[RMDB]
RNA sequence: GGGAACGACUCGAGUAGAGUCGAAAAUGUGACGAUUGUGAUGAUAAGCACCUGUCGUUCUCCACUUGCCUGCUGUUUGCCGCUGGAGGGAGCGGCAGCUGCCACUGCCUGUCAUAUUGGGCCUGGGCAGAUACAUGGCAUUCGUGCCAUGUAUCUGAAAAGAAACAACAACAACAAC
Reactivity to 2A3 in 0.01 (KOAc 150mM, MgCl2 10mM, bicine 150mM(pH8.5), 24C), signal-to-noise 7, nucleotides 027 to 126: u070g000u010g020a020c030g060a100u120u190g040u070g060a160u040g030a060u060a300a060g020c010a020c020c010u020g000u020c010g000u030u020c050u020c010c010a080c050u030u090g040c010c030u030g020c020u100g060u300u200u150g030c020c000g010c000u020g020g030a020g010g020g020a020g000c000g000g010c000a000g010c000u010g010c010c010a050c020u050g040c010c030u060g020u020c020a020u040a060u110u080g040g040g000c010c020u040g000g040g020
Reactivity to DMS in 0.01 (KOAc 150mM, MgCl2 10mM, bicine 150mM(pH8.5), 24C), signal-to-noise 5, nucleotides 027 to 126: u010g020u000g000a040c040g010a090u010u000g010u000g010a130u010g010a160u010a140a190g010c040a060c140c040u000g010u000c010g010u000u010c010u010c010c060a070c090u000u000g020c070c040u000g020c020u010g010u000u010u010g010c020c260g000c010u000g000g020a160g020g010g020a140g010c010g000g010c020a010g000c090u000g000c020c060a040c050u000g010c040c080u010g010u000c030a050u000a070u000u000g010g000g010c010c040u000g010g000g000
This 177-nucleotide RNA was probed chemically with 2A3 and DMS. DMS adducts were read by reverse transcription with MarathonRT. For 2A3, 13,472 sequencing reads were counted. Values cover nucleotides 27 to 126.